[RMDB]
Record summary
Structure probing data (DMS and 2A3) for a 207-nucleotide construct. It was measured as part of the RMDB library M2RFPK. DMS adducts were read by reverse transcription with MarathonRT. Conditions: 150 mM KOAc, 10 mM MgCl2 and 150 mM bicine (pH 8.5), 24 C.
RNA sequence: GGGAACGACUCGAGUAGAGUCGAAAAAGUUCGCGCUUCCGUGAAACGCGAAAAUCGGACGGUGGCUGCAAGUCGCAUCGCAAAACCGCGGCAAGUGGAGUUAUCGAGAGGAGGCUGGGUUUUGGCUAGAACACACGGUACUUCGGUACCGUGUGAAUCAUCUUUCAUGAUUCGUCAUGAAAGAUGAAAAAGAAACAACAACAACAAC
Reactivity to DMS in 0.01 (KOAc 150mM, MgCl2 10mM, bicine 150mM(pH8.5), 24C), signal-to-noise 3, nucleotides 027 to 156: a100g000u000u000c010g010c000g010c020u000u000c020c190g070u030g020a070a030a030c010g000c000g000a010a020a090a080u010c120g040g000a130c070g020g010u000g010g050c040u000g000c050a080a120g000u000c030g040c010a110u000c060g000c080a090a060a100a170c040c110g000c050g020g010c040a070a180g020u000g020g010a130g020u000u000a100u000c050g000a140g000a090g010g000a060g030g030c050u000g000g000g010u000u000u000u000g010g000c070u000a110g020a090a190c000a010c000a000c030g030g010u000a000c010u000u000c300g060g000u010a010c000c000g020u000g010u000g010a030a080
Reactivity to 2A3 in 0.01 (KOAc 150mM, MgCl2 10mM, bicine 150mM(pH8.5), 24C), signal-to-noise 4, nucleotides 027 to 156: a000g080u040u040c020g010c000g000c040u090u030c080c060g120u110g090a060a040a010c010g030c000g020a030a000a000a080u130c050g040g030a010c030g040g000u020g000g020c020u060g030c040a010a060g020u040c020g000c040a070u060c080g010c100a050a030a080a030c020c060g040c010g040g000c040a080a110g050u050g060g030a070g010u070u050a080u110c090g020a050g000a020g080g010a030g030g000c050u030g030g030g000u020u030u050u070g020g000c030u030a030g070a190a020c000a000c000a000c020g010g000u000a000c010u030u050c130g040g000u000a000c000c000g000u000g000u000g000a000a000